An RNA of 207 nucleotides, treated with DMS and 2A3 and read out base by base. For 2A3 the reverse transcriptase was SuperScript II with manganese.

[RMDB]
RNA sequence: GGGAACGACUCGAGUAGAGUCGAAAAGUGAUCGCCACCACUGCUCUCCAGCCUGGGUGACAGACUGAGACCCUGUCCAAACAAGUAUGAUAUACUUAGGGAACAUUAGCAUUUAUGAUACUUUUUUAUCCAAGAAAGGCUAAAAUCUGCUUUGUUAGUCAUUUAAUUAGUUCGCUAAUUAAAUGACAAAAGAAACAACAACAACAAC
Reactivity to DMS in 0.01 (KOAc 150mM, MgCl2 10mM, bicine 150mM(pH8.5), 24C), signal-to-noise 3, nucleotides 027 to 156: g000u010g010a110u000c060g020c030c020a120c030c020a070c030u010g010c030u010c000u000c020c020a080g010c030c010u020g030g020g030u000g020a140c040a070g020a080c020u000g010a200g000a050c030c020c020u000g000u000c060c040a080a100a110c090a040a060g020u010a050u000g000a130u000a300u000a050c020u000u000a130g000g000g010a050a080c080a080u000u010a060g030c030a060u000u000u000a080u030g010a080u000a050c030u010u020u000u000u000u010a070u000c060c040a090a150g000a060a030a040g020g050c020u010a030a030a050a060u000c010u000g010c020u010u000u000g000u000u000a160
Reactivity to 2A3 in 0.01 (KOAc 150mM, MgCl2 10mM, bicine 150mM(pH8.5), 24C), signal-to-noise 5, nucleotides 027 to 156: g050u040g020a090u080c040g040c040c010a040c030c010a040c030u030g020c010u020c010u000c030c020a020g020c010c030u040g010g000g030u060g010a020c010a030g040a020c020u050g040a020g020a120c010c010c020u030g030u000c010c030a050a080a090c020a060a090g020u030a030u120g190a060u120a020u020a200c020u040u090a040g050g030g040a060a030c030a100u060u090a020g020c010a020u000u080u120a080u190g050a020u020a040c010u020u030u040u050u090u150a070u050c020c010a050a020g020a020a010a010g030g000c010u030a010a020a000a040u020c020u010g020c000u070u060u030g070u040u020a040
Conditions: 150 mM KOAc, 10 mM MgCl2 and 150 mM bicine (pH 8.5), 24 C.